An RNA of 207 nucleotides, treated with 2A3 and read out base by base. For 2A3 the reverse transcriptase was SuperScript II with manganese. The 2A3 profile rests on 1,281 reads. The RNA was probed in 150 mM KOAc, 10 mM MgCl2 and 150 mM bicine (pH 8.5) at 24 C. It was measured as part of the RMDB library RNAMAK.

RNA sequence: GGGAACGACUCGAGUAGAGUCGAAAAUAGCCCUUUCGAGGGCUAAAAAAGAUAUGGAAGCGAAGAUAGCUUGGAUUUAUGGGACGAUUCUCGGAAACGAGGGUCCCAUUGUCAGCUAUCUCGCUUCCUAAGUCAAAAAGACACGUUCGCGUGUCAAGUGAACAUUAGCGUUCGCGCUAAUGUUCACAAAAGAAACAACAACAACAAC
Reactivity to 2A3 in 0.01 (KOAc 150mM, MgCl2 10mM, bicine 150mM(pH8.5), 24C), signal-to-noise 2, nucleotides 027 to 156: u070a000g000c000c000c000u000u040u050c190g090a010g000g000g000c000u020a010a000a000a000a000a000g050a030u100a030u160g020g000a020a000g010c010g030a110a050g010a070u010a000g000c040u090u150g120g000a060u290u300u160a010u020g000g010g000a000c040g200a290u300u070c040u000c010g000g020a110a080a070c020g000a000g040g110g000u000c000c000c000a010u000u000g000u000c000a000g000c000u000a000u000c000u000c000g000c000u010u000c000c000u000a000a000g010u000c000a000a000a000a080a080g000a000c020a000c010g030u060u070c270g050c060g140u000g000u000c010a010a010